[RMDB]
RNA sequence: GGGAACGACUCGAGUAGAGUCGAAAACUUCAACCGCGAGCUGCUGCGCGUGCUGCGUCCCGGCGGCGUGUUCGCCGCCUGGGGCUACGGCUGGUUCAGCAUCGACGCGCAGAUCGAUGCCGCCAUACAGCAUAAAUGGAUUCGUCCAUUUAUGCUGAAAAGAAACAACAACAACAAC
Reactivity to 2A3 in 0.01 (KOAc 150mM, MgCl2 10mM, bicine 150mM(pH8.5), 24C), signal-to-noise 6, nucleotides 027 to 126: c020u190u120c050a080a060c050c060g000c020g040a060g010c020u080g000c010u020g000c020g000c000g020u030g030c020u030g020c010g010u010c000c000c000g000g010c000g000g000c050g010u190g260u170u230c050g000c000c000g020c000c040u050g000g000g000g000c000u020a030c040g040g000c010u040g110g220u220u290c060a010g010c010a050u060c030g050a020c000g000c000g000c020a010g010a050u090c040g050a070u110g010c000c010g030c040c010a110u170a170
Reactivity to DMS in 0.01 (KOAc 150mM, MgCl2 10mM, bicine 150mM(pH8.5), 24C), signal-to-noise 6, nucleotides 027 to 126: c070u000u000c120a090a140c180c100g010c010g010a110g010c020u000g000c010u010g010c010g000c010g010u000g010c040u010g010c300g000u000c000c000c000g010g010c000g010g010c000g020u000g010u000u000c040g030c000c000g010c000c010u000g030g000g000g010c010u000a040c130g010g010c020u000g010g010u010u010c080a060g010c020a040u000c050g000a120c020g020c030g010c030a040g000a120u010c080g010a050u010g010c030c050g010c030c160a110u010a160